An RNA of 177 nucleotides, treated with DMS and 2A3 and read out base by base. Conditions: 150 mM KOAc, 10 mM MgCl2 and 150 mM bicine (pH 8.5), 24 C. 2A3 adducts were read by reverse transcription with SuperScript II with manganese. The 2A3 profile rests on 4,708 reads. The data come from the RNA Mapping Database (RMDB), library OK1LIB.
RNA sequence: GGGAACGACUCGAGUAGAGUCGAAAAUCGUUUUCUGUUAUUCGCCCUCAGAGAAGAGAGUACUAGUGAGUAAGACUAUAUAUAUUUGUGGGUGUAUAGUUUUGUUUAGGAGGUGAAGCUGGAGUCGGGAUAAUUUUUAAUUCGUUAAAAAUUAUCCAAAAGAAACAACAACAACAAC
Reactivity to DMS in 0.01 (KOAc 150mM, MgCl2 10mM, bicine 150mM(pH8.5), 24C), signal-to-noise 3, nucleotides 027 to 126: u010c040g000u010u010u010u000c020u010g010u010u020a090u010u010c020g010c010c010c020u000c030a070g000a070g010a080a090g010a090g010a100g000u010a040c070u010a100g010u010g010a060g010u020a030a040g000a060c020u040a010u000a010u020a050u010a070u030u000u030g010u010g000g000g030u010g000u000a010u000a020g000u000u000u010u010g010u010u000u020a070g010g010a100g000g030u000g000a050a080g010c050u010g000g010a060g010u010c090g010
Reactivity to 2A3 in 0.01 (KOAc 150mM, MgCl2 10mM, bicine 150mM(pH8.5), 24C), signal-to-noise 6, nucleotides 027 to 126: u070c020g000u030u020u050u050c040u050g070u100u060a070u060u060c020g030c020c000c000u020c040a040g020a000g020a200a030g080a020g020a010g040u050a060c030u050a040g090u030g120a030g050u060a060a010g010a020c010u000a000u010a010u000a010u000a110u120u130u080g080u090g040g110g000u020g000u020a020u030a050g000u000u000u010u110g060u040u060u080a070g030g030a040g020g000u040g010a020a020g030c030u040g020g020a010g030u050c030g020